[RMDB]
RNA sequence: GGGAACGACUCGAGUAGAGUCGAAAAGGGGUCGGUUCGAGGCUAAAGACAUGAGGCUACUGAAGCCUCCACGGUAGAUCUCAACAGCUUUAGCUACCCACCGAACCGACGGAGGCACCCAAAGGCUGAGAGCAAAGUUCGCUUUGCUCUCAGCCAAGUAUGUAUAGAUGUUCGCAUCUAUACAUACAAAAGAAACAACAACAACAAC
Reactivity to 2A3 in 0.01 (KOAc 150mM, MgCl2 10mM, bicine 150mM(pH8.5), 24C), signal-to-noise 2, nucleotides 027 to 156: g090g010g010g020u000c000g010g000u000u000c000g000a000g000g010c000u040a010a010a000g050a030c110a110u190g000a000g010g020c000u000a010c000u020g030a100a020g000c010c000u000c000c000a010c020g000g030u040a050g020a300u040c000u000c020a030a170c120a100g070c000u000u000u000a000g000c000u020a070c050c070c030a040c000c010g000a000a000c000c000g000a000c000g000g000a000g010g000c000a020c000c020c000a070a050a020g000g000c000u000g020a010g000a000g010c020a030a010a000g010u060u070c080g020c040u000u020u000g030c000u000c000u000c000a000g000c010c000a000a000
Reactivity to DMS in 0.01 (KOAc 150mM, MgCl2 10mM, bicine 150mM(pH8.5), 24C), signal-to-noise 1, nucleotides 027 to 156: g010g030g000g060u000c020g000g030u010u000c010g000a150g050g000c020u010a000a050a030g000a040c040a230u010g000a000g020g020c000u010a210c020u000g000a090a140g000c000c000u020c000c010a030c050g040g040u000a060g020a140u000c000u000c030a090a210c010a220g000c000u010u000u000a030g020c020u010a020c020c010c010a300c030c000g000a000a060c010c010g010a010c000g010g010a030g060g000c010a110c020c000c020a140a140a120g030g040c000u000g000a020g010a000g020c000a030a040a000g040u000u000c300g010c020u000u000u010g020c000u000c010u000c000a010g030c000c000a000a060
Structure probing data (2A3 and DMS) for a 207-nucleotide construct.
DMS adducts were read by reverse transcription with MarathonRT.
Source: RMDB library RNAMAK, as collected in RNAgym.
Values cover nucleotides 27 to 156.
The RNA was probed in 150 mM KOAc, 10 mM MgCl2 and 150 mM bicine (pH 8.5) at 24 C.